[RMDB]
RNA sequence: GGGAACGACUCGAGUAGAGUCGAAAAAAUCACACUUACACUCCAGACUUCUUACUUCCAAACGGUAUAUUCGUUGAGACAAAGGGUCUGUGGGAAAGCGAUGAUAGAAAGAAGCACUUAUUAAUUAGGGAGCAGCACCCCGAGCUAGACAUCCGUAGCCUUUAAUCUUGUUCGCAAGAUUAAAGGCAAAAGAAACAACAACAACAAC
Reactivity to 2A3 in 0.01 (KOAc 150mM, MgCl2 10mM, bicine 150mM(pH8.5), 24C), signal-to-noise 1, nucleotides 027 to 156: a000a000u020c040a030c000a000c010u020u130a060c030a000c040u000c000c000a010g010a010c000u210u100c000u300u000a080c040u110u080c030c030a160a080a030c000g020g090u080a120u070a090u300u190c000g000u000u010g010a010g060a120c140a080a030a010g070g000g010u000c000u010g040u270g010g010g080a010a010a010g020c050g140a160u090g000a000u040a120g140a080a100a020g050a000a020g030c040a010c040u100u150a030u190u110a280a060u050u080a090g020g010g000a040g030c030a020g050c010a090c000c000c030c000g000a000g010c010u090a090g000a210c060a070u000c070c000g000u000a000